[RMDB]
RNA sequence: GGGAACGACUCGAGUAGAGUCGAAAACCCACGUGGUUCGCCACGUGGGAAAUAAAUUCAGCGGUAAUUCGAGGCCAAAUAUUACCGCUGAUGGCCACGAAAAAAGUACACAGUUCGCUGUGUACAACUCUUUGAAUCACUUCGGUGAUUCAAAGAGAAAAGAAACAACAACAACAAC
Reactivity to 2A3 in 0.01 (KOAc 150mM, MgCl2 10mM, bicine 150mM(pH8.5), 24C), signal-to-noise 2, nucleotides 027 to 126: c010c000c000a000c000g010u020g000g090u060u090c180g040c100c000a000c010g020u000g020g010g000a040a080a000u080a010a100a020u030u000c010a000g010c010g040g030u000a020a010u040u090c090g120a130g150g070c090c050a010a180a000u150a010u020u000a010c000c000g000c000u000g000a000u000g000g020c010c010a080c090g050a150a070a060a000a000a040g000u010a010c010a000c000a000g010u020u090c140g000c100u010g000u000g000u010a000c010a000a000
Reactivity to DMS in 0.01 (KOAc 150mM, MgCl2 10mM, bicine 150mM(pH8.5), 24C), signal-to-noise 1, nucleotides 027 to 126: c000c000c000a000c000g080u010g000g000u000u000c160g050c000c010a000c010g030u000g000g050g010a000a030a010u000a050a090a080u000u000c000a000g010c010g010g050u010a010a030u000u030c140g000a180g030g010c190c130a050a120a080u000a020u000u000a010c010c000g030c000u000g000a000u000g000g010c010c010a070c100g000a000a010a070a110a080a170g010u000a000c000a010c000a030g010u000u010c180g010c010u000g060u000g000u000a000c000a030a030
Description: The record gives the reactivity of an RNA of 177 nucleotides to 2A3 and DMS. The reactions ran in a buffer of 150 mM KOAc, 10 mM MgCl2 and 150 mM bicine (pH 8.5), at 24 C. Values cover nucleotides 27 to 126. It was measured as part of the RMDB library M2PK50.